[RMDB]
RNA sequence: GGGAACGACUCGAGUAGAGUCGAAAAACGUCGUAUCUUGAUGAGAACUUAGACGAGACAGAGACGUAUUUCUAUCGUGUCGCGGCGCGCAACGACGUGGAUGAUGGCGAGUUGUCGGCGGAAGUGUCGGCAAGUCCGUUGACGGAAGGCACCACAACGAUGACAAGUUUUUCGAAACUUGUCAUCGAAAAGAAACAACAACAACAAC
Reactivity to DMS in 0.01 (KOAc 150mM, MgCl2 10mM, bicine 150mM(pH8.5), 24C), signal-to-noise 2, nucleotides 027 to 156: a090c060g000u000c020g050u010a060u010c010u000u000g000a130u000g000a160g000a090a100c150u000u000a090g030a130c000g000a060g030a070c060a090g000a230g010a030c070g020u000a120u000u000u000c070u000a050u000c020g030u000g020u000c030g030c020g000g010c090g000c080g050c030a050a030c010g000a040c050g020u010g020g000a060u010g030a100u000g000g000c070g000a080g000u010u010g010u000c020g020g010c020g000g010a100a080g040u000g050u000c000g020g020c010a050a050g020u000c030c040g040u000u010g020a090c050g000g020a070a110g040g000c030a080c030c010a060c050a050a180
Reactivity to 2A3 in 0.01 (KOAc 150mM, MgCl2 10mM, bicine 150mM(pH8.5), 24C), signal-to-noise 3, nucleotides 027 to 156: a000c030g010u030c010g040u120a070u080c040u050u130g090a170u130g050a050g030a170a090c060u140u120a090g060a110c040g010a020g010a030c060a010g090a000g030a050c010g030u070a050u010u070u010c090u060a120u130c060g010u030g050u100c020g000c030g020g000c030g040c010g000c040a020a030c030g060a010c030g020u050g010g050a060u100g000a040u060g020g020c070g030a060g040u020u040g010u030c020g000g010c010g060g100a220a060g060u140g010u180c000g010g030c000a020a000g060u000c000c000g040u040u120g050a080c010g020g040a030a010g030g000c010a020c040c000a050c020a120a000